Record summary
An RNA of 177 nucleotides, treated with DMS and 2A3 and read out base by base. For 2A3, 3,298 sequencing reads were counted. The reactions ran in a buffer of 150 mM KOAc, 10 mM MgCl2 and 150 mM bicine (pH 8.5), at 24 C.

[RMDB]
RNA sequence: GGGAACGACUCGAGUAGAGUCGAAAAGAUGCCCAGGUCGGACCGCGAGGAGGUGGAGAUGCCAUGCCGACCCGAAGAGGAAAGAAGGACAGGAGACGCGAACCUGUGAGUGGAAACCCGCUUUAUUCGUAUGAUUUAAGUUCGCUUAAAUCAUACGAAAAGAAACAACAACAACAAC
Reactivity to DMS in 0.01 (KOAc 150mM, MgCl2 10mM, bicine 150mM(pH8.5), 24C), signal-to-noise 3, nucleotides 027 to 126: g000a150u010g000c010c010c000a110g010g000u000c030g000g010a090c040c050g020c110g010a100g020g030a090g010g010u000g010g020a120g000a110u010g010c050c040a040u010g010c060c030g000a100c050c020c050g020a050a050g010a090g000g000a070a050a070g010a110a060g000g000a090c070a050g010g000a090g000a090c100g030c050g000a070a080c030c020u000g000u010g000a070g020u010g010g000a050a090a150c040c030c020g030c090u000u000u000a100u010u000
Reactivity to 2A3 in 0.01 (KOAc 150mM, MgCl2 10mM, bicine 150mM(pH8.5), 24C), signal-to-noise 2, nucleotides 027 to 126: g080a030u160g040c000c010c010a000g020g060u030c000g010g060a080c000c030g020c020g050a040g020g020a010g000g060u070g030g000a120g010a060u130g040c040c000a060u120g010c000c020g030a030c000c000c040g040a060a020g040a020g070g040a050a080a050g060a030a020g020g010a000c000a040g020g050a080g010a040c030g000c020g070a020a040c000c010u050g020u040g050a050g010u070g040g010a080a000a040c000c020c000g010c000u100u130u110a220u030u060